The record gives the reactivity of an RNA of 177 nucleotides to 2A3 and DMS. Conditions: 150 mM KOAc, 10 mM MgCl2 and 150 mM bicine (pH 8.5), 24 C. 2A3 adducts were read by reverse transcription with SuperScript II with manganese.
RNA sequence: GGGAACGACUCGAGUAGAGUCGAAAAACUUUUUCAUCCAUUAAACCCCUUACAAUGUCGAGUAAACGAAGCAUCUGUCCCCUGGUAUUGUCUUCGAGCUUGGUGUUUUUUUCUAGCCAACUCCAAGUACGAUGCACAAUUUCGAUUGUGCAUCGUAAAAAGAAACAACAACAACAAC
Reactivity to 2A3 in 0.01 (KOAc 150mM, MgCl2 10mM, bicine 150mM(pH8.5), 24C), signal-to-noise 2, nucleotides 027 to 126: a000c010u050u080u050u070u150c030a090u040c030c020a000u040u080a040a100a120c000c000c000c040u040u080a030c090a070a090u140g050u070c060g020a010g090u130a000a090a030c030g020a040a030g060c020a010u050c010u150g030u050c000c020c000c000u040g020g040u080a100u010u080g050u050c000u000u010c000g000a000g010c060u000u010g020g000u030g100u110u010u010u000u000u000u000c110u050a060g010c000c000a010a010c020u000c000c010a000a010g000
Reactivity to DMS in 0.01 (KOAc 150mM, MgCl2 10mM, bicine 150mM(pH8.5), 24C), signal-to-noise 3, nucleotides 027 to 126: a130c070u000u060u010u000u020c060a050u030c030c030a120u010u010a060a080a160c040c000c030c010u000u010a070c110a070a070u020g040u010c040g010a090g000u030a050a070a040c080g010a080a050g010c060a050u020c030u000g000u000c000c030c020c020u000g000g000u020a050u000u000g000u000c030u000u000c090g010a100g010c120u000u000g000g000u000g000u000u000u010u010u000u010u010c050u030a130g000c060c080a050a020c030u020c010c050a040a030g010